The record gives the reactivity of an RNA of 177 nucleotides to DMS and 2A3.
Values cover nucleotides 27 to 126.
The 2A3 profile rests on 2,902 reads.
Conditions: 150 mM KOAc, 10 mM MgCl2 and 150 mM bicine (pH 8.5), 24 C.
The DMS profile rests on 6,271 reads.
RNA sequence: GGGAACGACUCGAGUAGAGUCGAAAACUCUUGGAGGAAUUAAAAAGAAGGUUAUUAUUCCUGUACCAGCUGAUACGAAUCCUACAAGAAGGUGGUGGGCACUCAAGUUCCUGCUGCAACUUGUGUGCCUAGCGGGAAUAUUCGUAUUCCCGCUAGGAAAAGAAACAACAACAACAAC
Reactivity to DMS in 0.01 (KOAc 150mM, MgCl2 10mM, bicine 150mM(pH8.5), 24C), signal-to-noise 5, nucleotides 027 to 126: c030u000c010u000u000g000g000a030g010g000a040a080u010u010a070a110a120a130a090g010a100a070g010g010u010u010a080u000u010a170u000u010c020c030u000g020u000a080c040c020a080g020c060u000g010a100u010a050c150g000a070a080u000c010c000u000a040c010a010a020g000a050a070g000g020u000g010g030u000g010g000g000c030a010c000u010c040a010a030g000u000u000c100c070u010g010c120u000g010c300a010a030c000u000u000g010u000g000u000g000
Reactivity to 2A3 in 0.01 (KOAc 150mM, MgCl2 10mM, bicine 150mM(pH8.5), 24C), signal-to-noise 3, nucleotides 027 to 126: c010u010c020u030u050g020g020a020g010g030a070a080u100u110a190a170a070a050a060g090a070a040g090g030u050u100a070u170u040a060u100u150c010c020u020g030u050a060c010c010a020g010c030u060g020a030u020a180c040g050a030a060u000c000c010u000a030c010a020a010g050a050a080g080g020u080g020g090u050g010g010g000c020a000c030u040c040a050a050g010u020u020c030c030u060g070c050u060g010c000a020a050c000u010u020g000u010g020u020g060